Source: RMDB library OK2TST, as collected in RNAgym. Chemical mapping of a 177-nucleotide RNA with 2A3 and DMS. The RNA was probed in 150 mM KOAc, 10 mM MgCl2 and 150 mM bicine (pH 8.5) at 24 C. Values cover nucleotides 27 to 126. For DMS, 29,310 sequencing reads were counted.

RNA sequence: GGGAACGACUCGAGUAGAGUCGAAAAGGCUGCAACUUGUCGAGGAAGGCGUUGAAGGCGCUGCCGAGGCGGCCGGGUUCGUCGCGCGAAGUGACCUCCAGGCGCACGCGCAGGUCGCCAUCGCCGACGUAAUGAGGAGUUUCGACUCCUCAUUACGAAAAGAAACAACAACAACAAC
Reactivity to 2A3 in 0.01 (KOAc 150mM, MgCl2 10mM, bicine 150mM(pH8.5), 24C), signal-to-noise 9, nucleotides 027 to 126: g020g010c020u030g020c030a060a060c070u090u100g030u080c030g010a040g070g090a150a100g030g000c030g030u050u080g130a150a060g030g000c060g000c090u030g000c010c000g030a130g020g030c030g080g110c010c020g000g010g000u080u090c030g010u010c030g000c010g000c090g270a180a040g020u020g040a060c000c010u020c020c010a040g010g010c010g000c010a010c010g020c020g000c010a010g020g060u110c010g000c010c000a040u030c010g000c000c010g010a010
Reactivity to DMS in 0.01 (KOAc 150mM, MgCl2 10mM, bicine 150mM(pH8.5), 24C), signal-to-noise 9, nucleotides 027 to 126: g010g020c030u000g010c050a080a090c100u000u000g010u000c040g020a130g010g010a130a120g010g010c020g010u000u010g010a100a110g010g010c030g010c040u000g010c050c010g000a200g000g000c020g010g010c000c010g010g000g010u000u000c170g000u000c050g020c050g010c120g010a090a140g020u000g010a050c020c040u010c040c050a090g010g010c010g010c030a050c040g000c140g010c030a050g000g010u000c010g000c030c020a050u000c020g010c020c010g010a160